[RMDB]
RNA sequence: GGGAACGACUCGAGUAGAGUCGAAAAGGCUGCGUAUCACUCUAGGGUACGUGAUAGUGCGAUAUAAGAAGCACUGGUACAUGCCGGCAGGGACAGUUUAGAGAUGGCCGCAGUCUCGUGUCCCUGCAAAAGGAGUUCUCGUUCGCGAGAACUCCAACUCUGCAUUAUGCUUCGGCAUAAUGCAGAGAAAAGAAACAACAACAACAAC
Reactivity to DMS in 0.01 (KOAc 150mM, MgCl2 10mM, bicine 150mM(pH8.5), 24C), signal-to-noise 1, nucleotides 027 to 156: g030g040c050u000g020c010g040u010a140u010c050a150c050u000c080u000a220g020g030g070u010a020c030g000u000g000a090u000a000g000u040g040c010g040a170u000a130u020a170a170g010a220a300g060c030a010c020u010g010g010u000a110c040a080u000g010c040c030g000g000c000a060g010g070g010a010c030a070g010u030u000u000a190g010a070g020a050u000g010g010c110c220g000c060a270g000u010c010u010c000g020u000g010u000c020c010c020u000g090c030a020a010a060a020g020g000a050g020u000u020c010u000c000g080u030u010c300g040c000g000a010g020a000a020c010u000c010c000a000a030
Reactivity to 2A3 in 0.01 (KOAc 150mM, MgCl2 10mM, bicine 150mM(pH8.5), 24C), signal-to-noise 2, nucleotides 027 to 156: g000g000c020u020g000c040g010u010a040u060c030a050c200u130c160u270a120g130g000g000u020a020c050g000u050g010a040u100a030g000u000g000c020g030a020u020a040u030a300a110g160a120a030g000c000a000c000u000g010g010u090a060c040a010u110g010c010c000g010g000c020a020g020g020g000a000c010a010g020u010u110u220a010g010a030g000a050u050g100g020c070c030g020c110a050g010u010c000u000c010g010u020g000u000c000c000c000u010g000c000a000a000a000a000g000g000a000g000u000u000c000u000c000g010u040u040c200g000c010g060a000g010a000a000c010u000c000c000a000a010